Structure probing data (2A3 and DMS) for a 177-nucleotide construct. For DMS, 1,322 sequencing reads were counted. The reactions ran in a buffer of 150 mM KOAc, 10 mM MgCl2 and 150 mM bicine (pH 8.5), at 24 C. DMS adducts were read by reverse transcription with MarathonRT. For 2A3, 3,212 sequencing reads were counted.
RNA sequence: GGGAACGACUCGAGUAGAGUCGAAAAGAUAUGGAUGACUGCUAGGACCCGAGCACUGUAUCGGAAACGAUACAAACUCGCCUUGGACCAGUCAUCCUAAGUCAAAACACCUUGUUCGCAAGGUGAACUCUGUUCACUGGUUCGCCAGUGAACAGAGAAAAGAAACAACAACAACAAC
Reactivity to 2A3 in 0.01 (KOAc 150mM, MgCl2 10mM, bicine 150mM(pH8.5), 24C), signal-to-noise 2, nucleotides 027 to 126: g010a010u050a070u140g010g000a020u010g000a000c000u010g060c020u070a040g020g040a090c130c130c080g000a010g000c090a060c130u010g000u000a020u010c000g040g050a110a060a040c010g010a000u060a000c000a040a030a130c020u000c020g060c000c000u100u150g070g000a180c150c050a020g000u000c000a000u000c010c000u010a010a010g020u000c020a060a020a080a110c010a000c000c000u020u010g060u080u050c240g030c190a010a020g000g010u010g000a010a020
Reactivity to DMS in 0.01 (KOAc 150mM, MgCl2 10mM, bicine 150mM(pH8.5), 24C), signal-to-noise 2, nucleotides 027 to 126: g000a040u000a300u000g000g000a010u000g000a030c000u000g020c040u000a090g000g000a070c120c300c100g020a000g030c110a060c230u000g010u000a000u000c000g020g000a110a090a140c010g010a010u000a000c020a030a050a190c000u010c000g000c160c000u000u000g020g000a300c300c020a010g000u000c010a010u000c010c000u000a040a030g010u000c020a050a050a050a210c030a010c000c000u000u000g010u000u000c160g000c010a000a000g010g010u000g000a050a050
Reactivities are given for positions 27 through 126.